[RMDB]
RNA sequence: GGGAACGACUCGAGUAGAGUCGAAAAGCCCCCGUCUUCGGACGGGGGCAAUUAACGGUGGGCGCAUGCAGCUAGUCGAAAAUGCUGCUCGACCUUUUGCUAAAAUACGACCCUUCGGGGUCGUAAACUAUAUGAAGUCGUUCGCGACUUCAUAUAGAAAAGAAACAACAACAACAAC
Reactivity to DMS in 0.01 (KOAc 150mM, MgCl2 10mM, bicine 150mM(pH8.5), 24C), signal-to-noise 2, nucleotides 027 to 126: g010c000c000c000c000c000g030u000c010u000u010c220g010g010a030c000g040g040g000g040g010c010a000a000u000u000a080a120c100g020g010u000g000g000g010c040g000c170a030u000g000c080a100g010c010u000a170g010u010c130g010a110a090a110a080u010g010c000u020g000c010u000c040g000a050c010c010u000u000u010u010g010c070u010a050a050a100a160u010a000c010g000a020c000c000c000u010u000c200g000g000g020g010u000c000g010u000a000a010a160
Reactivity to 2A3 in 0.01 (KOAc 150mM, MgCl2 10mM, bicine 150mM(pH8.5), 24C), signal-to-noise 2, nucleotides 027 to 126: g020c000c020c010c020c000g000u050c030u050u110c270g120g000a010c000g010g040g000g000g000c000a010a010u080u080a080a010c040g050g060u040g020g020g000c010g020c020a040u160g020c000a000g000c010u050a030g220u230c070g060a010a110a000a000u150g000c040u040g000c040u010c010g290a300c010c020u070u090u060u090g030c010u050a120a000a000a090u020a010c030g010a010c030c020c010u040u010c200g040g000g000g000u000c000g010u000a000a000a000